Source: RMDB library OK2TST, as collected in RNAgym. An RNA of 177 nucleotides, treated with DMS and read out base by base. Reactivities are rounded to 0.1 and cut off at 0 and 3. The RNA was probed in 150 mM KOAc, 10 mM MgCl2 and 150 mM bicine (pH 8.5) at 24 C.
[RMDB]
RNA sequence: GGGAACGACUCGAGUAGAGUCGAAAACACGGGGGCAUUAAAACGUUCACGAAAACGGGCGAUAGUUUGCGGUGUCAGGCCGAUUUCCGGCACCAUCACCAGCGCCUGUUUGCCCUGAGCGAGCACAAGGCGAAAAUGAGUUCGCUCAUUUUCGCCUAAAAGAAACAACAACAACAAC
Reactivity to DMS in 0.01 (KOAc 150mM, MgCl2 10mM, bicine 150mM(pH8.5), 24C), signal-to-noise 2, nucleotides 027 to 126: c090a150c120g010g030g020g030g000c250a050u010u010a050a060a120a170c090g020u020u000c030a020c170g020a120a030a010a070c040g010g000g010c000g010a030u000a060g010u000u000u020g050c150g020g060u010g030u020c130a100g000g000c300c050g000a140u010u000u040c070c010g010g000c000a030c020c020a090u000c190a010c020c020a090g000c010g000c030c020u000g010u000u000u000g020c100c030c060u000g000a030g000c000g000a110g020c130a070c160a090